[RMDB]
The record gives the reactivity of an RNA of 207 nucleotides to 2A3. The reactions ran in a buffer of 150 mM KOAc, 10 mM MgCl2 and 150 mM bicine (pH 8.5), at 24 C.

RNA sequence: GGGAACGACUCGAGUAGAGUCGAAAACACGGUGGUCCACGGGCCUGUGGUCAGCAAGGCCAUCCCUCGCAGCACCGUCAAGGUGACGGUGCCCCAGGAGGCCUUUGUGGAUCUGGACGCGUGGCUCUCCGGCGGCGCCGGGGGUGGCGGUGGAGUACACACUGGGAUGAUUCGUCAUCCCAGUGUGAAAAGAAACAACAACAACAAC
Reactivity to 2A3 in 0.01 (KOAc 150mM, MgCl2 10mM, bicine 150mM(pH8.5), 24C), signal-to-noise 1, nucleotides 027 to 156: c080a010c010g030g010u080g020g030u030c000c000a020c040g020g090g000c080c050u070g050u060g050g010u010c010a050g020c040a100a040g030g000c000c030a150u090c060c010c020u060c010g010c040a020g020c000a000c000c040g000u050c030a120a250g300g020u300g130a010c000g000g000u000g010c000c000c010c000a020g000g000a070g060g000c000c000u090u080u270g040u030g050g000a020u020c000u020g040g000a060c080g000c000g220u000g000g010c010u020c010u000c020c020g040g100c130g100g020c080g000c060c150g000g000g000g000g040u070g010g000c050g000g100u120g050g000a060g050u060a020